[RMDB]
RNA sequence: GGGAACGACUCGAGUAGAGUCGAAAAGGGGGUUAACCUAUCAAGGGCGUUAACCCAUGCAAUAAAGAGGGCGAGUGGAAAGUGGGUUGUCCUUAGUACUGGAAGGGUACAAGGACCAACGCUCAAGCUUGUAGUCACCAUUCGUGGUGACUACAAGAAAAGAAACAACAACAACAAC
Reactivity to DMS in 0.01 (KOAc 150mM, MgCl2 10mM, bicine 150mM(pH8.5), 24C), signal-to-noise 3, nucleotides 027 to 126: g000g020g020g030g010u010u010a050a010c020c020u000a200u000c220a080a170g000g000g010c140g020u000u000a060a020c000c000c000a060u000g030c130a090a130u000a040a090a090g000a050g000g010g000c070g000a100g000u000g000g000a050a070a090g010u010g000g000g000u000u000g000u000c000c010u000u000a070g010u000a010c000u000g010g050a190a120g020g020g010u000a000c000a030a010g000g000a030c060c220a010a040c060g010c050u000c050a070a150g010
Reactivity to 2A3 in 0.01 (KOAc 150mM, MgCl2 10mM, bicine 150mM(pH8.5), 24C), signal-to-noise 3, nucleotides 027 to 126: g090g000g030g020g000u020u030a020a030c000c000u060a070u200c130a050a060g100g060g000c110g030u010u010a000a010c000c000c000a000u040g010c000a020a230u170a220a150a020g100a090g060g010g010c050g040a040g010u060g030g090a200a050a050g050u120g030g100g000u060u080g010u050c000c000u000u020a050g000u000a010c010u070g140g210a180a090g210g020g010u010a000c000a000a000g010g020a010c000c000a020a020c050g020c020u050c040a020a020g020
Structure probing data (DMS and 2A3) for a 177-nucleotide construct. It was measured as part of the RMDB library OK2TST. The 2A3 profile rests on 2,672 reads.